The record gives the reactivity of an RNA of 177 nucleotides to 2A3. 2A3 adducts were read by reverse transcription with SuperScript II with manganese. It was measured as part of the RMDB library OK1LIB. The RNA was probed in 150 mM KOAc, 10 mM MgCl2 and 150 mM bicine (pH 8.5) at 24 C. For 2A3, 554 sequencing reads were counted.
[RMDB]
RNA sequence: GGGAACGACUCGAGUAGAGUCGAAAACGCGAAAUUCCGCCGCAAAGCGACAAGCCCAAUACGCUGCAAAUCGCCCUGCAAACGCGCAUCAAAGUUUUUUACCGCCCGCAGGCGCUAUCGAAAAUCGCGAUGCUGGUGCUUUCGAGCACCAGCAUCGAAAAGAAACAACAACAACAAC
Reactivity to 2A3 in 0.01 (KOAc 150mM, MgCl2 10mM, bicine 150mM(pH8.5), 24C), signal-to-noise 1, nucleotides 027 to 126: c060g000c000g050a000a000a040u130u020c000c000g020c010c020g090c110a050a000a000g010c000g040a150c050a060a040g010c020c000c010a000a000u120a020c090g020c060u010g100c050a000a000a090u030c020g020c010c000c050u040g000c020a110a000a090c010g040c090g020c000a060u040c160a070a080a200g040u030u000u000u000u010u070a090c080c070g000c000c000c000g040c000a000g080g000c050g010c030u100a000u020c080g040a160a000a000a000u120c090g000